[RMDB]
RNA sequence: GGGAACGACUCGAGUAGAGUCGAAAAUCGGGUGUAGUCGAGCGAUGCAUAGUUUCAGUUGUCUACAAUGGCUCUGCAUUGAAUGGCAUCUGGCUUAAGAAUGUUGUCUACUGCCCACGCCACGUUAUUGGAAAAUUCCGUGGUGACCAGUGGACUCGAGGCUAAAAAUGUUCGCAUUUUUAGCCUCAAAAGAAACAACAACAACAAC
Reactivity to DMS in 0.01 (KOAc 150mM, MgCl2 10mM, bicine 150mM(pH8.5), 24C), signal-to-noise 2, nucleotides 027 to 156: u000c060g000g030g030u000g000u000a080g030u000c000g000a140g050c040g000a080u000g050c030a130u000a040g010u010u010u000c070a060g040u010u000g010u010c020u000a300c040a040a070u010g010g050c100u000c110u000g000c070a090u000u000g010a030a170u000g020g000c000a030u010c020u000g010g000c000u000u000a090a120g010a090a100u000g010u000u000g040u000c000u000a200c020u000g000c040c020c100a070c060g000c010c000a020c040g030u000u000a020u000u030g010g020a080a110a020a020u010u000c050c020g030u000g000g000u010g010a050c300c010a070g020u000g030g000a050c040u010c080
Reactivity to 2A3 in 0.01 (KOAc 150mM, MgCl2 10mM, bicine 150mM(pH8.5), 24C), signal-to-noise 4, nucleotides 027 to 156: u060c020g010g030g000u030g010u060a100g040u070c050g040a020g050c040g070a050u030g000c020a060u060a090g020u050u090u120c040a070g010u030u020g040u050c060u050a070c040a050a110u030g060g000c080u050c090u220g000c040a000u010u070g080a190a060u110g010g000c000a010u020c020u010g050g010c000u060u080a060a050g090a140a100u120g030u150u100g000u090c000u000a020c000u020g000c010c020c010a020c000g000c000c000a000c000g000u020u000a020u040u000g230g030a170a100a050a050u020u010c000c000g000u000g000g000u010g010a070c010c020a010g020u020g010g010a010c000u030c150